The record gives the reactivity of an RNA of 170 nucleotides to 2A3 and DMS.
[RMDB]
RNA sequence: GGGAACGACUCGAGUAGAGUCGAAAAUCGGAGGAGAAAGACCGUAGCGAUGGGGGAGAUGCUAGGAGUAGGCGGCGACCGAAGCGAGGAGGAAAGCAAAGAAAGCCACGGGGCUAGCGAGUGGAUGGAAGCGAACUGUUCGCAGUUCGCAAAAGAAACAACAACAACAAC
Reactivity to 2A3 in 0.01 (KOAc 150mM, MgCl2 10mM, bicine 150mM(pH8.5), 24C), signal-to-noise 4, nucleotides 027 to 129: u070c010g040g010a030g000g030a060g090a020a110a000g060a040c020c040g090u040a010g050c040g030a060u080g020g000g000g000g000a010g000a010u090g010c110u110a050g000g040a010g050u130a030g010g080c020g000g010c000g030a020c000c000g010a010a020g020c030g000a030g000g070a020g000g020a060a040a000g000c040a030a000a110g070a070a030a010g020c000c000a060c080g030g000g020g000c010u030a040g020c040g030a020g040u060g000g000a040u080g020g050a060a010
Reactivity to DMS in 0.01 (KOAc 150mM, MgCl2 10mM, bicine 150mM(pH8.5), 24C), signal-to-noise 1, nucleotides 027 to 129: u020c100g010g000a050g000g020a050g000a020a020a020g010a000c050c080g000u020a080g030c170g000a030u030g030g030g000g030g000a050g010a050u070g030c060u020a080g020g010a050g040u060a060g040g030c160g010g020c060g000a040c030c040g020a140a000g050c000g010a000g040g030a090g050g000a000a060a030g020c150a060a090a110g040a000a010a010g030c020c030a100c040g000g000g010g110c040u000a060g050c000g030a020g010u040g020g030a060u000g010g020a120a060

For 2A3, 5,600 sequencing reads were counted. The reactions ran in a buffer of 150 mM KOAc, 10 mM MgCl2 and 150 mM bicine (pH 8.5), at 24 C.